RNA sequence: GGGAACGACUCGAGUAGAGUCGAAAACGUGCCUUCAUGCUAAGGGUUUGAUAUCUGCUAAAACCCGGUGCAUUCAUCAAUGCAGGUUAAGCCAAAGGGAUGUCCCGACCGGCGGCCGACAAUCCAGAUAGCUCAAGAAUGUUCGCAUUCUUGAGAAUCCAACUUCCAGAUUCGUCUGGAAGUUGGAAAAAGAAACAACAACAACAAC
Reactivity to DMS in 0.01 (KOAc 150mM, MgCl2 10mM, bicine 150mM(pH8.5), 24C), signal-to-noise 1, nucleotides 027 to 156: c040g020u010g000c000c010u000u000c050a130u000g000c020u000a300a270g000g080g010u000u000u000g000a180u000a050u000c000u000g020c060u000a080a030a050a030c030c000c000g000g040u020g010c030a050u000u000c080a000u000c060a080a160u000g020c030a020g000g010u000u010a070a110g000c000c040a020a300a220g010g000g000a130u000g000u000c090c000c030g000a130c020c040g000g050c300g020g050c010c020g030a090c080a000a090u000c030c010a170g000a140u010a070g030c020u010c000a030a010g010a020a010u000g000u000u010c260g030c010a030u000u000c010u000u000g000a040g010a020a030
Reactivity to 2A3 in 0.01 (KOAc 150mM, MgCl2 10mM, bicine 150mM(pH8.5), 24C), signal-to-noise 1, nucleotides 027 to 156: c040g130u150g010c010c020u080u180c050a090u080g000c000u050a050a060g010g000g000u000u000u030g000a000u000a030u050c000u020g010c000u010a000a000a010a050c010c030c000g020g000u010g000c000a130u190u300c030a030u070c110a140a120u130g010c000a000g010g000u000u020a040a000g000c000c000a000a000a000g000g010g000a040u050g060u050c000c040c030g030a020c000c030g000g000c000g000g010c000c000g000a000c050a030a000u030c030c040a060g010a270u140a050g070c000u000c000a000a000g000a000a000u010g000u040u080c170g030c140a010u000u000c000u000u000g000a000g000a000a000
An RNA of 207 nucleotides, treated with DMS and 2A3 and read out base by base. Reactivities are given for positions 27 through 156. High DMS reactivity at an A or C suggests that its Watson-Crick edge is free. The DMS profile rests on 1,920 reads. For DMS the reverse transcriptase was MarathonRT. Source: RMDB library M2RFPK, as collected in RNAgym. The RNA was probed in 150 mM KOAc, 10 mM MgCl2 and 150 mM bicine (pH 8.5) at 24 C.